RNA sequence: GGGAACGACUCGAGUAGAGUCGAAAAACUAAUAAAAAAGUAGUUCGCGUUGUCGUUAUCUUAAUGCUAAUCGCGAUUGUAUUAUCCAGCGUUUUAACCGGGGUAUUAAUGUUUUUAUAGAUAUCCGCUAACUACUUUAGUUCGCUAAAGUAGUUAGAAAAGAAACAACAACAACAAC
Reactivity to DMS in 0.01 (KOAc 150mM, MgCl2 10mM, bicine 150mM(pH8.5), 24C), signal-to-noise 2, nucleotides 027 to 126: a090c020u020a060a050u030a000a080a060a120a130a160g000u020a070g010u000u000c030g030c120g020u000u000g000u000c010g050u010u000a070u010c160u020u000a030a030u000g010c020u000a060a020u000c040g030c010g010a010u010u000g020u000a050u000u000a020u020c040c040a140g040c060g010u000u020u000u020a060a140c160c080g020g020g000g020u000a000u000u000a070a090u010g000u010u000u010u010u000a030u000a150g000a070u000a030u000c010c010g020
Reactivity to 2A3 in 0.01 (KOAc 150mM, MgCl2 10mM, bicine 150mM(pH8.5), 24C), signal-to-noise 1, nucleotides 027 to 126: a010c040u050a060a080u170a230a160a030a040a010a060g110u060a020g000u090u000c000g030c000g010u000u030g000u060c010g000u000u010a080u160c120u080u140a010a010u040g030c030u050a050a030u120c010g010c030g030a010u000u140g130u040a080u090u000a020u020c020c030a040g030c050g110u000u120u000u200a020a000c040c020g030g000g000g000u020a070u010u030a070a090u000g070u040u050u020u110u000a020u030a090g000a010u020a030u050c020c020g000